[RMDB]
RNA sequence: GGGAACGACUCGAGUAGAGUCGAAAAAGUUGAGGUUGGGGACCUCAACCUAGAUUUCAGAGAAUGUAUAGAAAUGCCUGGAUGUCCAGGCAGAAGUUUGCUAUAGGGACGGUGCCCUUGUGGAGAACCUCUACUUGGGCAAUGUGGAGGAAAAGUGCCACCCGAAAAGGUUCGCCUUUUCGGGUGGAAAAGAAACAACAACAACAAC
Reactivity to 2A3 in 0.01 (KOAc 150mM, MgCl2 10mM, bicine 150mM(pH8.5), 24C), signal-to-noise 1, nucleotides 027 to 156: a010g010u010u000g010a030g000g010u020u030g000g090g000g030a010c000c000u000c000a000a010c010c000u060a120g010a240u120u150u000c020a030g050a000g050a180a020u080g040u040a080u060a070g010a040a110a030u040g000c010c010u000g080g000a200u250g160u110c030c000a010g010g000c000a000g010a000a010g000u010u200u040g110c000u030a040u040a130g010g000g020a020c070g070g020u060g040c000c000c000u010u000g000u040g010g010a080g010a110a060c030c020u000c020u000a020c010u000u000g030g010g030c010a000a070u020g000u040g000g000a180g080g000a190a050a000a040g140u300g020
Description:
Structure probing data (2A3) for a 207-nucleotide construct. The reactions ran in a buffer of 150 mM KOAc, 10 mM MgCl2 and 150 mM bicine (pH 8.5), at 24 C.